Notes
An RNA of 177 nucleotides, treated with 2A3 and DMS and read out base by base. Source: RMDB library OK1LIB, as collected in RNAgym.
RNA sequence: GGGAACGACUCGAGUAGAGUCGAAAAUCAUACUGGGUAGUAGAUUUUGGGAGUCACGGUCUCUACUAUCUAGUAUGAGCACUACUGGUAGACUAGACUGUGAUUCCCAAAGUCUAUCAGUGGUGUAGUAUCUGGUAGUAUUCGUACUAUCAGAUACAAAAGAAACAACAACAACAAC
Reactivity to 2A3 in 0.01 (KOAc 150mM, MgCl2 10mM, bicine 150mM(pH8.5), 24C), signal-to-noise 9, nucleotides 027 to 126: u090c010a010u020a030c000u010g000g020g060u070a050g020u000a000g020a010u010u000u010u020g020g010g010a030g020u030c010a010c020g010g010u000c000u010c010u050a180c000u000a010u020c010u010a000g000u000a020u060g010a010g020c050a010c040u010a000c000u000g000g000u000a000g040a100c100u010a010g010a020c020u040g020u020g030a040u010u010c000c000c000a000a010a000g000u000c000u000a000u010c000a000g000u020g020g030u050g010u030a040
Reactivity to DMS in 0.01 (KOAc 150mM, MgCl2 10mM, bicine 150mM(pH8.5), 24C), signal-to-noise 9, nucleotides 027 to 126: u030c040a050u020a020c010u000g010g000g010u050a140g010u000a010g000a010u000u000u000u010g000g000g000a020g010u000c010a010c000g000g000u000c000u000c120u010a130c000u000a010u010c040u040a000g010u000a020u010g010a110g020c150a070c140u000a010c040u000g000g010u000a000g000a210c230u010a040g010a020c020u000g010u000g000a020u000u000c000c000c000a000a010a000g000u000c000u000a000u010c010a030g000u010g010g020u000g000u000a120
The DMS profile rests on 55,922 reads. The RNA was probed in 150 mM KOAc, 10 mM MgCl2 and 150 mM bicine (pH 8.5) at 24 C.